An RNA of 177 nucleotides, treated with 2A3 and DMS and read out base by base.
RNA sequence: GGGAACGACUCGAGUAGAGUCGAAAAACGCCGCGAAGCCUCCGGACAACCCUUGAUAUCAACACUCCACCCGUCCCAGCCAGCCCCGACAAGCGCGUCAACAGCCCGAGUCGUGAAAUACGCGUUAUGAUAAAUACCUCUUCGGAGGUAUUUAUCAAAAAGAAACAACAACAACAAC
Reactivity to 2A3 in 0.01 (KOAc 150mM, MgCl2 10mM, bicine 150mM(pH8.5), 24C), signal-to-noise 3, nucleotides 027 to 126: a000c030g020c010c010g020c010g050a020a030g020c020c000u040c040c010g050g010a030c030a070a070c040c020c000u020u080g120a090u050a020u120c070a050a090c020a020c050u060c000c010a040c020c000c010g000u000c000c000c000a010g000c020c020a010g000c020c000c000c000g020a020c030a060a040g040c010g010c000g050u060c050a120a110c010a070g040c000c010c010g030a000g020u080c030g010u020g090a140a070a030u190a040c030g000c000g060u110u100a080
Reactivity to DMS in 0.01 (KOAc 150mM, MgCl2 10mM, bicine 150mM(pH8.5), 24C), signal-to-noise 4, nucleotides 027 to 126: a090c080g000c050c010g000c070g000a110a140g000c020c020u000c040c040g020g020a070c060a120a090c050c020c020u000u000g000a070u030a090u020c070a060a060c050a060c050u000c020c030a080c000c020c020g000u020c010c010c010a100g010c040c030a060g000c010c020c000c010g020a070c110a060a070g030c030g000c020g010u010c110a080a100c100a080g020c010c010c010g000a030g010u010c030g010u000g000a060a070a080u030a050c060g020c050g000u020u030a070
The reactions ran in a buffer of 150 mM KOAc, 10 mM MgCl2 and 150 mM bicine (pH 8.5), at 24 C. 2A3 adducts were read by reverse transcription with SuperScript II with manganese. The 2A3 profile rests on 2,404 reads. It was measured as part of the RMDB library OK1LIB. For DMS the reverse transcriptase was MarathonRT.